[RMDB]
RNA sequence: GGGAACGACUCGAGUAGAGUCGAAAAGAUAUGGAUCUGUGUUGAGGAGGUGGGUCGGAAACGACCCUAACUCCAAUGAUGCACAGAGUCCUAAGUCAAAACGGUUAGGCCUUCGGGCCUAACCGAAGUAGCCAAAAUAGUUCGCUAUUUUGGCUACAAAAGAAACAACAACAACAAC
Reactivity to DMS in 0.01 (KOAc 150mM, MgCl2 10mM, bicine 150mM(pH8.5), 24C), signal-to-noise 2, nucleotides 027 to 126: g000a040u000a030u010g010g000a110u000c000u000g010u000g000u000u000g000a010g050g020a010g000g000u010g010g000g020u000c010g020g000a010a000a040c010g020a020c000c010c010u000a020a100c000u000c010c000a210a300u000g000a040u000g000c000a030c000a020g010a050g000u000c000c000u000a010a100g000u010c010a070a050a080a140c010g000g000u000u010a010g000g010c000c000u000u010c300g020g010g010c000c000u010a010a000c000c000g000a000a030
Reactivity to 2A3 in 0.01 (KOAc 150mM, MgCl2 10mM, bicine 150mM(pH8.5), 24C), signal-to-noise 1, nucleotides 027 to 126: g000a010u020a010u030g000g000a010u040c000u010g000u000g000u030u030g030a000g000g000a010g060g020u070g020g000g010u000c010g000g020a020a000a000c020g000a010c000c000c010u020a020a020c000u000c000c000a010a100u010g000a000u000g000c010a000c010a000g000a000g000u020c000c000u010a000a000g010u020c020a000a020a100a140c020g010g010u000u000a000g000g010c000c000u030u120c300g090g020g000c010c000u010a000a000c000c000g000a000a000
This 177-nucleotide RNA was probed chemically with DMS and 2A3. The DMS profile rests on 2,369 reads. The reactions ran in a buffer of 150 mM KOAc, 10 mM MgCl2 and 150 mM bicine (pH 8.5), at 24 C. Source: RMDB library TTRDEL, as collected in RNAgym.